[RMDB]
RNA sequence: GGGAACGACUCGAGUAGAGUCGAAAACGUCCGCGGGCCGGCCCCGGUGCACGGGCAGGCAGCGUGGCGCAGGGAGGGCUGGCAACGCUUCGACUUCCGGCCGUGCGCGACGCCCGACGAGGCGCGCGUCGCUAUCCCAAUUCGUUGGGAUAGCGACAAAAGAAACAACAACAACAAC
Reactivity to DMS in 0.01 (KOAc 150mM, MgCl2 10mM, bicine 150mM(pH8.5), 24C), signal-to-noise 3, nucleotides 027 to 126: c080g000u020c030c060g000c010g010g000g030c000c020g000g000c110c050c010c070g020g040u010g000c100a110c110g000g000g000c040a070g020g030c000a140g010c040g010u010g000g000c040g000c060a080g000g010g000a090g000g000g000c030u010g020g000c070a090a070c090g030c040u020u020c140g000a090c050u000u010c010c000g000g020c020c020g010u010g000c010g010c040g010a110c080g030c020c000c030g000a110c140g010a120g010g000c000g000c030g050c180
Reactivity to 2A3 in 0.01 (KOAc 150mM, MgCl2 10mM, bicine 150mM(pH8.5), 24C), signal-to-noise 7, nucleotides 027 to 126: c010g040u040c020c010g020c020g020g110g010c020c020g040g010c020c010c010c030g090g060u190g040c110a040c040g020g040g000c030a070g050g020c020a010g020c010g030u060g040g010c060g000c050a060g020g060g040a150g020g060g050c020u030g020g030c050a110a080c080g020c040u110u100c070g110a160c010u060u000c030c000g030g010c010c020g060u060g010c020g000c020g070a030c030g030c010c000c000g080a160c070g020a120g010g000c020g000c010g000c030